[RMDB]
RNA sequence: GGGAACGACUCGAGUAGAGUCGAAAAGACCAAUAACAGAAUGCACCACACCGUAAAAUCAUCUGAUUGGGUGAGUUGGUCGCACCGCCAUUUGACGAACGAACGCCAAGCCUAAGCCGUCUUUGUGAACACGAGCUAGUCUUCGGACUAGCUCGAAGACGGUACAAAAGUUCGCUUUUGUACCGUCAAAAGAAACAACAACAACAAC
Reactivity to DMS in 0.01 (KOAc 150mM, MgCl2 10mM, bicine 150mM(pH8.5), 24C), signal-to-noise 3, nucleotides 027 to 156: g000a170c040c020a050a080u010a100a250c080a300g000a090a150u000g030c020a100c000c020a090c010a080c010c020g020u010a070a040a020a070u010c030a060u010c060u010g010a050u010u000g000g020g030u000g000a080g020u000u010g020g030u000c050g000c020a080c040c000g000c030c010a140u000u000u000g030a090c030g010a140a110c080g000a070a090c090g010c050c030a020a150g000c020c010u000a130a180g010c000c030g050u000c030u010u010u020g010u010g000a120a110c130a170c000g000a030g090c000u010a000g040u000c000u000u000c300g020g010a010c000u000a010g010c000u000c000g010a010a040
Reactivity to 2A3 in 0.01 (KOAc 150mM, MgCl2 10mM, bicine 150mM(pH8.5), 24C), signal-to-noise 1, nucleotides 027 to 156: g010a030c000c000a020a050u110a080a000c050a050g130a190a100u130g000c050a020c000c040a050c000a010c000c010g020u050a010a070a070a120u020c040a070u030c060u070g080a110u160u080g010g000g040u000g020a040g020u020u030g030g000u050c050g000c020a020c020c030g000c050c040a080u080u110u110g000a000c030g010a100a000c020g000a110a060c010g030c020c010a050a000g010c020c040u040a050a150g010c040c010g010u020c000u000u030u010g140u020g020a020a020c040a000c100g000a000g000c000u000a000g000u000c010u010u030c180g000g000a000c000u000a000g000c010u020c000g000a020a000